The record gives the reactivity of an RNA of 177 nucleotides to 2A3 and DMS.
DMS adducts were read by reverse transcription with MarathonRT.
High 2A3 reactivity points to a flexible backbone, as in loops and unpaired stretches.
2A3 adducts were read by reverse transcription with SuperScript II with manganese.
It was measured as part of the RMDB libraries RFM100 and RFMREP.
The reactions ran in a buffer of 150 mM KOAc, 10 mM MgCl2 and 150 mM bicine (pH 8.5), at 24 C.
RNA sequence: GGGAACGACUCGAGUAGAGUCGAAAAUAGGUAAACCCCACUGGGAGCAAGGCAUUAGGGCGUACCGUCGUUUCAGACGGUAUGUCUGCACGAACGCUUGAAGGCUGCUCGCCUGAGUUCGUGGGUAGCCAAGAUAAGACUUCGGUCUUAUCUUGGCAAAAGAAACAACAACAACAAC
Reactivity to 2A3 in 0.01 (KOAc 150mM, MgCl2 10mM, bicine 150mM(pH8.5), 24C), signal-to-noise 4, nucleotides 027 to 126: u110a020g140g010u110a080a110a060c000c020c020c000a050c080u050g050g030g010a040g040c050a050a000g100g040c010a010u080u230a120g010g020g000c010g010u000a000c010c010g010u000c020g000u080u150u300c060a020g010a000c010g000g000u000a000u000g000u010c010u000g000c000a010c020g060a060a000c030g020c070u020u140g050a010a010g020g010c010u100g040c020u080c100g040c000c000u060g020a060g010u020u020c020g010u030g000g070g050u060a010
Reactivity to DMS in 0.01 (KOAc 150mM, MgCl2 10mM, bicine 150mM(pH8.5), 24C), signal-to-noise 3, nucleotides 027 to 126: u020a070g000g020u010a030a100a090c100c000c000c100a090c110u000g000g010g020a050g020c020a080a090g000g000c060a110u000u000a120g000g010g000c000g030u000a010c010c000g040u020c000g020u000u050u040c250a090g000a000c030g000g020u010a000u000g000u000c000u000g000c080a010c020g000a030a050c030g020c170u000u040g010a090a040g000g020c010u030g000c170u030c130g000c000c000u010g030a100g000u000u010c020g010u000g000g020g000u010a030